This 177-nucleotide RNA was probed chemically with 2A3 and DMS. The 2A3 profile rests on 2,072 reads. Conditions: 150 mM KOAc, 10 mM MgCl2 and 150 mM bicine (pH 8.5), 24 C. For DMS the reverse transcriptase was MarathonRT. Source: RMDB library OK2TST, as collected in RNAgym.
RNA sequence: GGGAACGACUCGAGUAGAGUCGAAAAGUGCAUACCGCUCUCGGCUUCACCGUGGCUGUGGCCGUGUGCACACCGGGUGAGACGCCCGGUUCGUGGUUGCGGCCAGCAUCGUGCACCACAGCGCUGCACCCUGCUCCUUUUUCGAAAGGAGCAGGGUAAAAGAAACAACAACAACAAC
Reactivity to 2A3 in 0.01 (KOAc 150mM, MgCl2 10mM, bicine 150mM(pH8.5), 24C), signal-to-noise 2, nucleotides 027 to 126: g030u030g000c020a010u010a090c040c000g050c010u050c020u050c040g040g000c010u140u120c030a050c040c070g070u090g090g050c040u070g000u090g130g000c000c000g050u060g020u040g070c020a000c010a000c010c000g000g000g010u030g090a300g020a070c180g030c020c000c000g000g020u000u090c040g000u030g020g080u050u080g020c000g000g000c000c000a010g020c000a030u090c010g010u010g040c010a030c010c030a010c000a020g060c040g030c060u060g050c000
Reactivity to DMS in 0.01 (KOAc 150mM, MgCl2 10mM, bicine 150mM(pH8.5), 24C), signal-to-noise 2, nucleotides 027 to 126: g010u000g010c020a050u000a080c290c040g010c020u010c060u000c080g030g000c080u010u000c060a080c060c150g040u000g000g010c020u020g010u000g000g040c000c050g000u000g020u000g010c010a050c020a090c000c010g000g000g030u000g000a170g000a100c220g010c000c000c000g010g010u000u000c080g020u000g000g000u000u000g000c000g020g000c010c010a080g000c050a080u010c140g010u000g000c210a120c010c030a020c130a050g020c020g020c060u000g000c090